[RMDB]
RNA sequence: GGGAACGACUCGAGUAGAGUCGAAAAAGCGGGGUCUCGUGGUCGAGGGCGUAGCCCCUGUUCAGACAGGAGUAAUCCCAGCUGAAACAGGGUUUUCACCCUUCCUUUCUUCUGGUUUCCUUCCUCUACUGUAUACAAUCUUCGGAUUGUAUACAGUAAAAGAAACAACAACAACAAC
Reactivity to DMS in 0.01 (KOAc 150mM, MgCl2 10mM, bicine 150mM(pH8.5), 24C), signal-to-noise 5, nucleotides 027 to 126: a050g000c050g010g000g000g020u000c020u010c030g030u000g020g010u000c080g010a080g010g010g010c060g020u000a080g010c210c000c000c010u000g000u000u000c040a080g000a120c140a200g000g000a010g010u010a090a090u010c060c000c010a130g010c020u000g000a030a030a020c090a020g000g000g010u000u010u000u010c120a060c020c010c000u000u000c030c020u010u000u000c020u000u000c030u000g000g010u000u010u000c030c020u000u000c010c010u000c170u010
Reactivity to 2A3 in 0.01 (KOAc 150mM, MgCl2 10mM, bicine 150mM(pH8.5), 24C), signal-to-noise 3, nucleotides 027 to 126: a010g030c040g010g010g000g010u020c010u010c050g060u080g030g080u090c080g040a070g040g040g000c040g040u080a030g000c000c000c010c000u010g030u030u060c050a050g020a100c030a030g000g030a020g030u100a060a050u030c010c000c010a040g020c010u010g000a010a020a070c250a070g010g000g000u040u030u130u180c080a040c000c000c000u010u030c020c000u050u050u050c020u050u030c010u030g030g080u000u030u000c020c000u040u030c000c010u030c030u020